[RMDB]
RNA sequence: GGGAACGACUCGAGUAGAGUCGAAAAAGGGACUACAGGGUUAGCCUAGGGUAUAUAAGAUAGAUAUAGCGUUGAUUCGAUCAUUUGUCUUUUUCUAGGAAAUUUCUAUUAAAUAGAAAUAGUUCACUUGCUCAUACAAAUUCGUUUGUAUGAGCAAAAAAGAAACAACAACAACAAC
Reactivity to 2A3 in 0.01 (KOAc 150mM, MgCl2 10mM, bicine 150mM(pH8.5), 24C), signal-to-noise 2, nucleotides 027 to 126: a000g000g000g040a000c030u030a010c110a070g050g080g070u110u150a000g010c010c010u010a010g000g000g020u130a090u010a030u020a190a000g010a070u050a000g050a000u110a010u040a150g030c030g030u020u070g110a110u160u110c050g040a050u060c040a030u040u030u110g000u020c000u010u080u030u000u010c020u000a000g010g010a060a060a040u010u010u000c000u000a130u300u230a150a140a150u060a000g000a000a020a000u000a010g030u000u000c050a050c070
Reactivity to DMS in 0.01 (KOAc 150mM, MgCl2 10mM, bicine 150mM(pH8.5), 24C), signal-to-noise 2, nucleotides 027 to 126: a070g010g000g000a060c070u010a030c080a080g030g000g000u000u020a080g020c030c010u000a060g000g020g020u050a060u050a020u030a030a010g000a030u010a040g000a030u020a080u020a060g010c020g010u030u030g010a160u010u050c030g000a060u020c070a070u000u000u000g000u000c010u000u000u010u010u010c020u000a050g010g010a110a050a110u000u000u000c000u000a010u020u050a050a070a220u000a000g000a000a010a030u000a040g000u010u000c030a090c080